[RMDB]
This 207-nucleotide RNA was probed chemically with DMS. The RNA was probed in 150 mM KOAc, 10 mM MgCl2 and 150 mM bicine (pH 8.5) at 24 C.
RNA sequence: GGGAACGACUCGAGUAGAGUCGAAAACCUCAGGCACCGAGCGCGUAUUUCGGAGCAUGUGUUUCGGGGGCAGGCAUGGCUACAUAAAGCUAGAGAAGUGGGUCGAAGUGGGGCGUAAAGCAAGGACGGUCCAAGGGCGAGUCGACCUCUCCAUCGGCAUAUGAAGAAUGUUCGCAUUCUUCAUAUGAAAAGAAACAACAACAACAAC
Reactivity to DMS in 0.01 (KOAc 150mM, MgCl2 10mM, bicine 150mM(pH8.5), 24C), signal-to-noise 2, nucleotides 027 to 156: c030c020u000c070a090g020g020c030a100c060c030g000a110g030c080g000c110g040u000a140u000u000u010c100g010g000a170g040c080a130u000g010u000g020u000u000u010c050g010g000g020g010g000c050a040g010g060c090a080u000g010g000c030u030a070c220a140u010a070a100a080g000c030u000a110g000a090g000a070a100g020u000g000g030g020u000c050g010a050a070g010u010g000g000g000g030c050g020u000a060a050a100g020c060a060a070g010g020a070c030g010g030u010c020c050a090a120g000g020g050c010g020a080g020u000c020g000a070c020c030u000c030u000c020c030a120u010c080g000g000
The DMS profile rests on 5,408 reads.